[RMDB]
RNA sequence: GGGAACGACUCGAGUAGAGUCGAAAAAGCACCAAGGGCGCAGGGAGCCGGAAACGUGUGGCUCACACGGGCCCAGGGCGGGCACGUGCACACACACAGGCCUGCACAGGAAGCCAGGGGAUUGGCAUAUUCCACGGCUAUUCGUAGCCGUGGAAUAAAAAGAAACAACAACAACAAC
Reactivity to DMS in 0.01 (KOAc 150mM, MgCl2 10mM, bicine 150mM(pH8.5), 24C), signal-to-noise 1, nucleotides 027 to 126: a070g010c050a140c030c060a200a080g000g030g020c030g070c030a050g010g010g000a130g010c000c000g050g000a080a090a070c210g030u000g020u000g020g000c180u000c190a170c000a000c050g020g000g000c000c000c020a090g010g020g030c210g010g010g030c050a010c010g000u010g000c050a110c190a090c100a020c010a030c080a130g010g000c010c010u000g000c010a110c090a050g060g000a110a170g000c030c020a070g060g010g000g000a130u000u000g000g000c110a180

The record gives the reactivity of an RNA of 177 nucleotides to DMS. For DMS, 704 sequencing reads were counted. Source: RMDB library OK2TST, as collected in RNAgym. Values cover nucleotides 27 to 126.